[RMDB]
RNA sequence: GGGAACGACUCGAGUAGAGUCGAAAAGACGGGGGUUAUCCUUAAAUGAGGUAACGGCAGGCGCAGGUCCUGAAAUCGUGAGGUGGCAUGAACAUUAAGCGAAGAAAAGGAGAAUAACUAUUUCGUUCUUUUGAACUCAUCAGUAGGGACGCACAUCCUCAGUUAUGUGGUUCGCCACAUAACUGAGAAAAGAAACAACAACAACAAC
Reactivity to 2A3 in 0.01 (KOAc 150mM, MgCl2 10mM, bicine 150mM(pH8.5), 24C), signal-to-noise 3, nucleotides 027 to 156: g100a010c040g000g000g000g000g020u030u040a020u080c010c000u090u090a070a110a200u210g040a030g020g000u030a040a010c010g080g030c010a010g010g000c050g000c110a020g040g030u050c000c000u010g020a080a030a070u150c030g040u040g000a000g040g020u030g010g000c050a040u070g050a040a010c010a070u040u170a050a010g030c040g020a040a010g020a030a140a030a010g050g020a030g020a040a060u130a060a040c110u110a130u090u090u050c030g010u000u020c050u080u060u080u050g040a070a040c000u040c060a150u030c000a020g050u050a040g050g030g000a020c030g050c020a060c000a020u110c000
Reactivity to DMS in 0.01 (KOAc 150mM, MgCl2 10mM, bicine 150mM(pH8.5), 24C), signal-to-noise 1, nucleotides 027 to 156: g000a080c080g020g070g020g010g050u010u000a030u000c030c010u010u000a160a050a110u000g000a180g010g000u000a030a100c120g020g050c000a100g010g030c020g000c060a080g030g030u010c050c020u000g020a100a110a110u000c090g050u030g000a110g030g070u000g000g000c010a160u010g050a090a070c110a030u000u000a070a170g000c060g010a130a100g000a030a040a050a110g000g000a050g070a080a110u000a060a170c040u000a200u000u010u000c050g040u000u000c020u000u000u030u000g010a080a050c040u000c040a050u000c010a140g050u000a150g000g000g040a060c060g000c010a030c070a160u050c010